[RMDB]
RNA sequence: GGGAACGACUCGAGUAGAGUCGAAAAUGACAGUGUUCAGGCGCGAAAGCGUCUGAUAAUUAGCAAUGACUGUAUGCUAAUUGUCUAUUGUGAAAACAAUAGAAUGCUGUCUAACAGUCAUUGAUACGAUCUACAUUUAUUUCGAUAGGUGUAGAUCAAAAGAAACAACAACAACAAC
Reactivity to 2A3 in 0.01 (KOAc 150mM, MgCl2 10mM, bicine 150mM(pH8.5), 24C), signal-to-noise 9, nucleotides 027 to 126: u080g000a000c000a000g000u000g010u010u000c000a000g000g000c000g000c000g050a070a040a050g000c000g000u010c000u000g000a000u000a000a000u000u000a000g000c010a010a040u070g000a000c000u000g000u010a020u040g000c000u000a000a000u000u000g000u000c000u000a000u000u000g000u000g080a050a020a010a010c000a000a000u000a000g000a000a000u010g000c000u000g000u000c000u000a010a000c000a000g000u000c010a020u030u260g090a050u040a070c090
Reactivity to DMS in 0.01 (KOAc 150mM, MgCl2 10mM, bicine 150mM(pH8.5), 24C), signal-to-noise 9, nucleotides 027 to 126: u020g010a010c000a000g020u000g010u000u000c000a010g000g010c000g000c010g010a120a090a150g010c000g020u000c000u000g000a000u000a000a000u000u000a000g000c000a060a140u010g010a010c000u000g020u000a200u000g010c000u000a000a000u000u000g010u000c000u000a000u000u000g010u000g000a170a070a130a010c000a010a000u000a000g000a010a000u000g000c000u000g000u000c000u000a070a020c000a000g000u000c000a160u050u030g010a140u040a100c210